[RMDB]
RNA sequence: GGGAACGACUCGAGUAGAGUCGAAAAGUUACAAUAUAUCUGGGCAGUGCUGUGUUGUCGUUCCCCCUGCUAGAAAGUAAGUUGAUUCCUUCUAUUCCUGGCUGUUCUCUAUAGCAGACAGGAACGCACAUCCCUUGAGGUUCGCCUCAAGGGAUGUAAAAGAAACAACAACAACAAC
Reactivity to 2A3 in 0.01 (KOAc 150mM, MgCl2 10mM, bicine 150mM(pH8.5), 24C), signal-to-noise 2, nucleotides 027 to 126: g030u040u070a020c040a130a040u090a000u030a030u130c020u050g060g000g010c010a010g020u030g150c070u090g100u050g010u300u170g000u010c000g020u000u000c020c000c000c000c000u010g010c000u000a020g010a040a050a000g020u150a040a010g020u000u050g080a120u090u050c020c010u040u250c060u060a090u060u000c000c000u000g040g000c000u000g070u140u010c150u000c030u090a050u240a170g000c000a000g050a000c000a000g010g000a000a010c050g020c010
Reactivity to DMS in 0.01 (KOAc 150mM, MgCl2 10mM, bicine 150mM(pH8.5), 24C), signal-to-noise 2, nucleotides 027 to 126: g000u060u030a090c080a110a100u050a130u030a050u000c010u000g020g010g020c010a020g020u060g020c110u000g000u020g010u070u020g020u000c000g030u000u000c030c000c000c050c010u000g000c070u000a020g000a040a060a080g000u020a050a060g030u000u000g010a150u020u000c040c000u000u050c060u030a190u010u010c010c000u000g000g000c020u030g010u000u000c150u050c270u010a080u030a040g000c000a000g000a010c050a020g000g030a000a010c300g020c180